[RMDB]
RNA sequence: GGGAACGACUCGAGUAGAGUCGAAAAAAAGCUUGGAGAAGCCUGAACAAGCUGGUCACCCUCACUGUCAAAGACUUUCAUUUCCACGGAAGGGAAACUGAUGACCUGGGACCAUUGGAAGAACUAGUUAGUAAUUAAUCAGUUGCAUAAUCUUCCACGAGUAUAAAUCAUUCGUGAUUUAUACUCGAAAAGAAACAACAACAACAAC
Reactivity to 2A3 in 0.01 (KOAc 150mM, MgCl2 10mM, bicine 150mM(pH8.5), 24C), signal-to-noise 4, nucleotides 027 to 156: a000a000a000g030c040u050u020g030g010a090g030a180a030g100c000c030u020g020a040a020c020a060a020g010c010u020g020g020u070c050a160c020c010c000u030c020a070c060u090g030u070c050a090a050a060g020a080c030u060u090u010c040a120u010u070u070c040c030a040c090g050g020a030a030g070g010g000a040a060a070c050u060g040a090u050g030a090c000c070u030g020g010g020a030c020c010a050u040u080g010g020a020a020g010a040a040c050u040a030g080u100u030a020g050u090a120a130u150u080a060a080u120c060a030g020u040u010g000c010a020u030a150a050u060c010u020u000c030c000a020
Reactivity to DMS in 0.01 (KOAc 150mM, MgCl2 10mM, bicine 150mM(pH8.5), 24C), signal-to-noise 2, nucleotides 027 to 156: a040a040a040g010c020u020u020g020g030a180g000a050a070g010c020c030u000g020a090a160c050a010a050g010c040u000g010g020u000c080a130c030c010c020u000c050a080c090u010g000u000c050a060a110a090g000a120c080u000u010u000c060a140u020u000u000c050c040a100c110g010g010a130a140g030g000g000a050a090a200c060u000g000a110u000g000a100c040c040u000g010g000g010a130c030c060a170u000u000g000g000a140a010g010a040a090c070u000a070g020u000u000a120g020u020a070a050u000u020a050a120u000c060a110g030u000u000g000c010a050u000a070a300u000c020u000u000c010c050a230

This 207-nucleotide RNA was probed chemically with 2A3 and DMS. The data come from the RNA Mapping Database (RMDB), library OK3TST. 2A3 adducts were read by reverse transcription with SuperScript II with manganese. The DMS profile rests on 3,864 reads. In probing experiments dimethyl sulfate is read out at A N1 and C N3, which are open when not base-paired.